[RMDB]
Structure probing data (DMS and 2A3) for a 177-nucleotide construct.
For 2A3, 5,436 sequencing reads were counted.
For DMS, 5,426 sequencing reads were counted.
DMS adducts were read by reverse transcription with MarathonRT.
The RNA was probed in 150 mM KOAc, 10 mM MgCl2 and 150 mM bicine (pH 8.5) at 24 C.
RNA sequence: GGGAACGACUCGAGUAGAGUCGAAAACGCGUCCUGUUCGCAGGACGCGAAUUAAGCAAACCUUCCUGGUGGCGAGAAUAAAUGAGCACUCGCGCUCAUAAAAUAGGUGGGCGUUCGCGCCCACCAAACAGAACAAUUGAUUCGUCAAUUGUUCUGUAAAAGAAACAACAACAACAAC
Reactivity to DMS in 0.01 (KOAc 150mM, MgCl2 10mM, bicine 150mM(pH8.5), 24C), signal-to-noise 5, nucleotides 027 to 126: c010g020c000g020u000c010c000u000g000u000u020c200g050c000a030g010g020a010c010g020c000g010a020a020u000u010a090a130g000c160a060a090a080c040c050u000u000c020c020u010g010g010u000g010g030c010g010a060g010a130a110u010a030a090a060u010g000a020g000c030a130c100u010c120g010c110g000c000u000c010a050u000a050a050a090a110u010a070g020g020u000g010g010g010c000g030u000u010c190g030c020g000c000c000c000a000c000c010a010a040
Reactivity to 2A3 in 0.01 (KOAc 150mM, MgCl2 10mM, bicine 150mM(pH8.5), 24C), signal-to-noise 4, nucleotides 027 to 126: c010g000c000g000u010c000c000u020g040u050u070c290g000c050a010g010g010a000c000g000c000g000a000a000u060u040a040a000g050c020a040a030a140c010c020u030u040c010c040u080g070g050u090g070g030c040g010a060g040a140a090u150a200a170a060u140g020a030g010c020a020c080u070c070g040c040g000c010u000c030a040u160a050a160a050a030u200a100g030g010u010g000g000g000c010g040u030u060c180g000c010g000c030c000c000a000c010c000a000a000